[RMDB]
The record gives the reactivity of an RNA of 207 nucleotides to DMS and 2A3.
The reactions ran in a buffer of 150 mM KOAc, 10 mM MgCl2 and 150 mM bicine (pH 8.5), at 24 C.
It was measured as part of the RMDB library OK3TST.
RNA sequence: GGGAACGACUCGAGUAGAGUCGAAAAGUGCAUCUGUGCCUGGCCUGCUACCAGGACCCUUCUCCAUCCUCUCUAGGCUUCUUUGAUGUGUUGGCAUCAUGCUCCUCCUUUGCAGACAGGUUUUCUCUACUUGACCACAUGGUCACCAACAUCAUAACUCAGUAGUACUCUUCGGAGUACUACUGAGAAAAGAAACAACAACAACAAC
Reactivity to DMS in 0.01 (KOAc 150mM, MgCl2 10mM, bicine 150mM(pH8.5), 24C), signal-to-noise 2, nucleotides 027 to 156: g020u010g050c040a080u000c060u010g030u000g000c020c010u020g020g000c000c000u000g000c110u010a030c030c020a030g020g010a080c050c030c010u000u000c030u020c010c050a160u000c050c030u030c000u000c030u000a070g020g030c030u000u000c050u000u010u000g020a080u000g000u000g040u000u000g020g000c050a080u020c030a030u010g000c050u000c030c040u000c030c020u000u000u000g050c040a100g020a110c060a100g010g010u000u000u010u000c010u000c030u010a040c050u000u010g010a070c020c000a110c070a050u000g020g020u010c030a050c010c010a030a070c080a070u030c020a060u000a100a300
Reactivity to 2A3 in 0.01 (KOAc 150mM, MgCl2 10mM, bicine 150mM(pH8.5), 24C), signal-to-noise 6, nucleotides 027 to 156: g080u050g020c030a090u040c060u120g100u120g060c000c010u020g000g020c000c040u060g040c060u070a070c010c040a020g040g020a050c000c010c000u100u060c040u020c030c010a060u040c010c020u050c000u010c050u080a050g060g030c000u050u050c020u070u140u090g030a050u060g030u000g030u070u040g030g000c010a030u010c010a030u130g020c010u030c010c000u050c010c020u080u060u050g010c020a010g020a040c010a010g050g000u050u020u070u040c050u010c000u040a100c030u060u080g020a030c030c010a080c060a280u220g010g010u010c010a030c030c010a020a060c020a060u170c040a040u100a130a090